[RMDB]
RNA sequence: GGGAACGACUCGAGUAGAGUCGAAAAGAUAUGGACCAUGCAAGAGCGAUAAGCGUGCAUCGGAAACGAUGCAACGCUUUUGACGCUCAACCAUGGUCCUAAGUCAAAAGGCGGCUUCGGCCGCCAAUCAUAAGCUGAGCUUCGGCUCAGCUUAUGAAAAAGAAACAACAACAACAAC
Reactivity to DMS in 0.01 (KOAc 150mM, MgCl2 10mM, bicine 150mM(pH8.5), 24C), signal-to-noise 2, nucleotides 027 to 126: g000a030u000a300u000g000g000a030c000c000a020u020g010c050a090a300g000a010g020c000g000a200u000a010a000g000c010g100u000g010c010a010u020c000g030g000a060a050a190c000g000a000u000g040c000a010a030c000g020c000u030u000u000u000g050a200c130g000c010u000c020a010a230c300c010a000u000g000g000u010c000c000u000a000a100g010u020c070a130a040a110a230g000g020c000g010g050c000u000u000c140g050g030c020c000g020c000c000a020a010
Conditions: 150 mM KOAc, 10 mM MgCl2 and 150 mM bicine (pH 8.5), 24 C.
An RNA of 177 nucleotides, treated with DMS and read out base by base.
For DMS the reverse transcriptase was MarathonRT.
Values cover nucleotides 27 to 126.